About this RNA:
An RNA of 177 nucleotides, treated with 2A3 and DMS and read out base by base. The DMS profile rests on 799 reads. It was measured as part of the RMDB library TTRDEL. The reactions ran in a buffer of 150 mM KOAc, 10 mM MgCl2 and 150 mM bicine (pH 8.5), at 24 C.

RNA sequence: GGGAACGACUCGAGUAGAGUCGAAAAGAUAUGGAACUGUACAAGUUCUCUUGGAUUUAGAUUCGGAAACGAAUCUUGUCAGAGAGAGUAUUUCCUAAGUCAAAAUCGUUCCCUUCGGGGAACGAAACAGCGAUAAUACCUUCGGGUAUUAUCGCUGAAAAGAAACAACAACAACAAC
Reactivity to 2A3 in 0.01 (KOAc 150mM, MgCl2 10mM, bicine 150mM(pH8.5), 24C), signal-to-noise 1, nucleotides 027 to 126: g030a000u090a080u150g060g060a080a040c120u170g060u300a140c090a250a290g130u160u010c000u010c000u020u100g010g000a000u300u270u210a040g000a000u030u020c010g060g000a100a050a010c000g010a000a000u000c000u000u010g030u000c010a030g060a000g000a010g000a000g080u000a060u030u060u000c000c000u010a120a040g160u110c060a100a030a000a240u070c000g000u020u000c000c050c170u000u020c140g040g000g010g000a020a000c000g020a000a010a000
Reactivity to DMS in 0.01 (KOAc 150mM, MgCl2 10mM, bicine 150mM(pH8.5), 24C), signal-to-noise 1, nucleotides 027 to 126: g000a040u000a190u000g040g010a030a040c300u020g010u000a040c090a190a160g010u010u000c000u010c000u000u000g000g010a010u000u030u000a010g010a000u000u020c010g010g010a050a070a230c000g000a030a000u000c000u000u000g010u000c000a160g010a000g000a030g000a160g000u010a010u000u010u000c000c000u000a090a190g010u000c110a040a140a050a080u000c000g000u010u000c000c000c000u020u000c200g010g000g010g000a000a000c030g000a000a000a100